[RMDB]
Conditions: 150 mM KOAc, 10 mM MgCl2 and 150 mM bicine (pH 8.5), 24 C. This 177-nucleotide RNA was probed chemically with 2A3 and DMS. For 2A3 the reverse transcriptase was SuperScript II with manganese. For DMS, 2,404 sequencing reads were counted. It was measured as part of the RMDB library OK2TRN. For 2A3, 1,075 sequencing reads were counted.
RNA sequence: GGGAACGACUCGAGUAGAGUCGAAAAUCUGGGAUGGCCCAGUGCUGUCGUGGGGCCGUGGUCCUGAGCUCAGCUUUUCAUUUGAAGAGGUGGAAGGAGCUGACACCGUCCCAUCCCGGCAGGGCUGUAAGCCUGUUCCUUUCGAGGAACAGGCUUAAAAAGAAACAACAACAACAAC
Reactivity to 2A3 in 0.01 (KOAc 150mM, MgCl2 10mM, bicine 150mM(pH8.5), 24C), signal-to-noise 1, nucleotides 027 to 126: u050c030u120g010g060g090a120u200g120g000c000c060c000a060g080u070g030c020u030g020u040c000g010u040g000g000g000g000c000c000g000u000g030g150u100c030c050u080g040a020g020c010u010c030a100g080c010u000u010u000u070c030a130u080u160u290g170a180a090g070a030g140g000u050g060g030a060a040g050g040a050g000c030u040g010a010c000a010c030c010g030u010c020c000c000a000u070c000c020c020g020g000c010a020g000g000g000c010u020g070
Reactivity to DMS in 0.01 (KOAc 150mM, MgCl2 10mM, bicine 150mM(pH8.5), 24C), signal-to-noise 2, nucleotides 027 to 126: u010c020u000g000g010g020a160u000g000g000c010c010c020a120g010u000g040c020u000g010u000c090g030u020g000g010g000g000c010c180g000u010g020g020u010c060c300u010g020a070g000c020u020c020a130g010c060u010u010u000u000c010a150u000u000u000g010a140a070g000a030g000g010u010g010g000a090a080g000g000a020g010c020u000g000a080c020a020c020c220g000u000c010c000c000a070u000c100c120c020g000g000c030a130g000g000g020c030u010g000